This 177-nucleotide RNA was probed chemically with DMS. Reactivities are given for positions 27 through 126. The RNA was probed in 150 mM KOAc, 10 mM MgCl2 and 150 mM bicine (pH 8.5) at 24 C. For DMS the reverse transcriptase was MarathonRT. For DMS, 1,170 sequencing reads were counted.
RNA sequence: GGGAACGACUCGAGUAGAGUCGAAAAUGACUGCAACGCCUUGCACACUGCCAACAAACCCUCCCGCUCUGGAAGAGACAACCCUGCAGGAAGGGACGUGCCUCUUUUCCCCCAGUGAGACGCGCCGGGUACUUCUUCUGUUCGCAGAAGAAGUACCAAAAGAAACAACAACAACAAC
Reactivity to DMS in 0.01 (KOAc 150mM, MgCl2 10mM, bicine 150mM(pH8.5), 24C), signal-to-noise 1, nucleotides 027 to 126: u000g000a100c020u000g050c040a080a070c120g050c060c000u010u000g000c000a070c040a130c090u000g000c030c000a050a100c080a060a100a270c080c010c020u010c010c000c010g000c110u000c070u030g000g010a050a050g010a070g000a050c100a060a060c010c030c020u000g000c040a100g000g000a090a050g010g020g020a030c160g020u000g020c030c030u000c010u000u000u000u000c040c000c000c040c060a140g000u010g010a100g010a030c030g000c070g030c090c060g020